[RMDB]
RNA sequence: GGGAACGACUCGAGUAGAGUCGAAAAAACUCUUUAAGGCAAUAACGAACUAAUUCUAAGCACGUAAUGGAGAAAUGCCAGGGUCACUAUCUAGCCAUAAUAGUGCUUGACAGUAUGAUACUAACUGAAUAUGGUAAACCGUUCGCGGUUUACCAAAGUAGACCAAUAGGUUCGCCUAUUGGUCUACAAAAGAAACAACAACAACAAC
Reactivity to 2A3 in 0.01 (KOAc 150mM, MgCl2 10mM, bicine 150mM(pH8.5), 24C), signal-to-noise 3, nucleotides 027 to 156: a000a010c110u140c040u140u120u090a150a060g030g000c050a090a130u110a140a050c080g070a040a080c050u060a090a100u150u040c040u080a040a040g010c010a020c060g040u040a010a100u080g040g000a030g090a050a050a010u080g030c040c060a030g060g020g000u030c030a010c060u020a030u100c030u040a050g020c010c010a030u030a160a050u050a130g060u060g020c030u030u010g010a020c000a010g040u040a080u090g080a020u050a130c070u050a180a050c030u070g070a030a100u100a120u170g010g020u000a000a000a000c020c000g030u010u030c240g000c040g090g000u010u000u000a000c000c010a000a000a000
Reactivity to DMS in 0.01 (KOAc 150mM, MgCl2 10mM, bicine 150mM(pH8.5), 24C), signal-to-noise 2, nucleotides 027 to 156: a070a020c020u010c030u000u000u010a050a060g000g010c000a100a070u000a070a110c090g000a110a110c060u000a060a140u000u010c030u000a040a110g020c040a050c060g060u000a070a090u000g020g010a150g000a080a050a130u000g020c020c040a040g020g020g000u000c020a060c050u000a060u000c030u010a090g020c050c050a090u000a100a080u000a070g020u000g040c020u010u000g010a040c010a050g020u000a020u010g010a080u000a080c150u010a040a110c090u000g020a070a170u000a130u000g040g010u010a010a010a010c000c000g010u000u000c200g050c010g030g010u000u000u000a000c010c000a000a000a070